[RMDB]
RNA sequence: GGGAACGACUCGAGUAGAGUCGAAAAGAGCACAUGCCGCGGAAUAGGCAAAAGUGUUGCGGACCUGCGUAGUUUCGAAAAGCGGACGGCCACGACGGCCCUUUGGGUGGGGUUGCAGCCGUAGCGCCUAGGUACAAGUGUUCGCACUUGUACCUAGAAAAGAAACAACAACAACAAC
Reactivity to DMS in 0.01 (KOAc 150mM, MgCl2 10mM, bicine 150mM(pH8.5), 24C), signal-to-noise 2, nucleotides 027 to 126: g050a070g010c000a030c040a130u010g010c000c010g030c130g010g000a100a150u000a080g000g010c030a040a060a030a110g010u010g000u000u010g000c080g010g010a220c050c040u010g000c120g000u000a050g010u010u010u000c040g000a100a060a080a110g000c000g000g000a010c010g010g020c010c050a120c050g000a230c040g000g000c010c000c010u000u010u010g030g000g010u010g000g000g000g020u000u000g000c030a300g000c000c000g000u000a040g010c010g000c070
Reactivity to 2A3 in 0.01 (KOAc 150mM, MgCl2 10mM, bicine 150mM(pH8.5), 24C), signal-to-noise 2, nucleotides 027 to 126: g020a000g000c020a000c000a030u050g030c000c000g000c130g170g240a200a140u140a180g050g000c000a040a030a030a060g030u050g010u020u090g060c000g010g020a060c010c000u090g000c080g060u070a070g030u070u030u090c040g010a030a080a000a030g020c000g010g010a000c000g010g030c020c030a100c090g110a040c040g060g040c020c030c020u080u210u210g270g020g080u190g010g000g010g030u010u000g040c000a000g000c050c010g010u010a040g100c000g010c000